[RMDB]
RNA sequence: GGGAACGACUCGAGUAGAGUCGAAAAAGCAGCUUCGGCUGCUGAUCUCCGUAGGCACAGAACUACAAAUUAAGAGCCAUCGAUCUGGAUUUCGAAAGAGAUCCAGGGAGGCUCUAUAUUUGCUGUGCCUAAACGGCAAACCCGGAUUCGUCCGGAAUAUAUACUCUCCUUUCGAGGAGAGUAUAUAAAAAGAAACAACAACAACAAC
Reactivity to 2A3 in 0.01 (KOAc 150mM, MgCl2 10mM, bicine 150mM(pH8.5), 24C), signal-to-noise 1, nucleotides 027 to 156: a000g010c010a010g010c070u060u220c300g170g000c000u050g000c010u030g020a010u020c070u000c010c010g020u030a010g000g020c000a000c010a010g010a170a050c080u240a080c180a040a070a030u110u100a180a030g000a010g000c000c010a120u300c080g010a020u030c010u000g050g000a020u000u020u000c000g040a090a110a020g000a050g020a010u000c000c000a010g010g010g000a050g050g000c000u030c000u010a030u000a000u030u000u000g000c010u000g000u000g000c000c000u000a000a010a000c000g080g000c000a070a090a110c060c040c000g040g000a050u030u070c170g020u040c090c030g000g030a040a000
Reactivity to DMS in 0.01 (KOAc 150mM, MgCl2 10mM, bicine 150mM(pH8.5), 24C), signal-to-noise 1, nucleotides 027 to 156: a040g040c000a050g000c010u000u000c300g120g010c000u000g020c000u000g000a020u010c040u000c010c040g030u010a040g010g000c000a030c000a040g000a150a160c000u000a220c000a010a020a060u000u010a290a120g000a040g050c000c000a170u010c150g020a050u020c010u000g000g000a030u000u010u000c000g010a190a110a220g000a040g000a010u000c000c000a020g010g000g000a020g020g020c000u000c000u010a000u010a020u000u000u000g030c040u000g000u000g000c000c000u000a010a030a040c010g000g030c090a060a050a070c140c000c000g010g000a110u010u000c160g000u000c010c000g000g000a130a100